[RMDB]
RNA sequence: GGGAACGACUCGAGUAGAGUCGAAAAACUUUCCCUGCAAUACGCUAUUCGCCUUAGAUGUAUCUGGGUGGCUGCUCCACUAAAGCCCGGGAAUAUGCAACCAGUUACAUUUGAGGCCAUUUGGGCUACGAACAGCAUAAUUCGUUAUGCUGUUCGUAAAAGAAACAACAACAACAAC
Reactivity to DMS in 0.01 (KOAc 150mM, MgCl2 10mM, bicine 150mM(pH8.5), 24C), signal-to-noise 2, nucleotides 027 to 126: a070c170u010u000u000c000c000c010u020g010c160a160a080u010a060c090g020c030u010a070u010u000c230g000c010c000u000u000a050g000a000u000g000u010a010u000c000u000g010g000g000u000g000g030c060u040g000c070u000c020c020a040c100u000a100a140a130g020c060c060c030g000g010g000a040a000u000a040u020g030c040a030a080c010c010a000g000u010u000a030c050a070u000u000u000g010a050g000g000c010c060a000u000u000u010g010g010g000c040u000
Reactivity to 2A3 in 0.01 (KOAc 150mM, MgCl2 10mM, bicine 150mM(pH8.5), 24C), signal-to-noise 2, nucleotides 027 to 126: a000c040u050u050u000c000c000c000u010g000c010a030a110u100a110c060g000c040u070a070u120u120c040g000c000c000u010u000a010g000a020u020g010u000a020u010c000u020g070g020g040u180g150g000c020u010g020c000u020c000c000a080c080u160a260a070a140g040c050c060c070g030g000g020a010a020u140a020u200g000c000a000a040c000c000a010g000u030u010a000c010a000u000u000u000g010a010g000g000c010c010a000u020u020u080g140g000g010c010u030